Structure probing data (2A3) for a 207-nucleotide construct. 2A3 adducts were read by reverse transcription with SuperScript II with manganese. Values cover nucleotides 27 to 156.
RNA sequence: GGGAACGACUCGAGUAGAGUCGAAAAUUCUGCUUCGGCAGAACAAAAACCUUUGUGUACAGGGGUGUACGGGAGAUCGUGUCACCCAUUGGGUGAAACACGAUCGAGGAUCGUACACCGACUGUACACUCUGGUGUCCUUGUACGUUCGCGUACAAAUCCACUCUAGUCUUCGGACUAGAGUGGAUAAAAGAAACAACAACAACAAC
Reactivity to 2A3 in 0.01 (KOAc 150mM, MgCl2 10mM, bicine 150mM(pH8.5), 24C), signal-to-noise 2, nucleotides 027 to 156: u030u000c010u000g010c020u060u040c190g160g000c000a000g010a000a000c040a020a170a030a030a020c000c000u000u000u000g020u000g000u010a010c010a000g000g000g050g010u010g020u020a000c000g000g000g010a020g000a010u000c000g020u000g090u070c020a000c010c020c070a130u030u170g000g000g000u010g010a100a080a010c000a000c000g000a000u000c010g000a030g000g000a010u000c000g000u000a000c020a000c010c000g020a020c000u000g000u000a000c010a000c000u000c000u000g010g000u020g040u010c000c000u000u060g000u000a010c010g010u010u060c300g000c030g140u040a000c010a000a130
The RNA was probed in 150 mM KOAc, 10 mM MgCl2 and 150 mM bicine (pH 8.5) at 24 C.